[RMDB]
RNA sequence: GGGAACGACUCGAGUAGAGUCGAAAAAGCAUUUAUAUGUAUAGUGGCAAUAAAGCUGGUAAUCAAAGAAAUAACGAUUUUAAUACCACAUACAGUGUUAAAGUUGGAGAAAAUGAAUUGGUUAGUAAUAUGAAUAAUCUAGUUUUGUUCAAAUCCCAUUGAGCUAUGUAUUCGUACAUAGCUCAAUAAAAGAAACAACAACAACAAC
Reactivity to 2A3 in 0.01 (KOAc 150mM, MgCl2 10mM, bicine 150mM(pH8.5), 24C), signal-to-noise 2, nucleotides 027 to 156: a010g000c010a060u090u190u170a220u120a030u200g020u010a080u060a110g000u020g040g030c060a080a000u060a100a100a050g030c040u050g060g040u100a050a040u170c060a120a150a110g100a100a090a020u080a030a050c020g020a000u000u040u010u090a040a080u090a010c020c020a010c020a060u090a040c050a060g070u050g020u100u020a010a050a040g020u020u000g080g000a050g070a010a110a070a090u050g010a030a070u130u050g040g000u000u040a000g000u020a020a130u040a130u300g010a050a070u090a040a010u070c000u000a020g040u000u020u060u060g030u000u040c020a040a080a120u030c060c030c000
Reactivity to DMS in 0.01 (KOAc 150mM, MgCl2 10mM, bicine 150mM(pH8.5), 24C), signal-to-noise 2, nucleotides 027 to 156: a130g000c010a050u000u010u000a060u010a070u020g000u000a080u000a090g030u010g000g000c020a080a110u020a040a100a110g020c050u010g000g000u010a070a120u010c030a100a060a160g010a120a110a160u020a070a090c010g000a020u010u000u010u000a000a120u000a030c020c030a060c110a150u000a070c120a030g020u000g000u010u000a030a020a090g020u000u010g000g020a120g030a050a060a070a070u000g000a100a140u000u000g000g000u000u000a050g000u000a050a090u000a090u010g000a090a050u010a030a050u010c040u010a220g020u010u000u000u000g000u000u000c040a040a070a090u000c020c000c020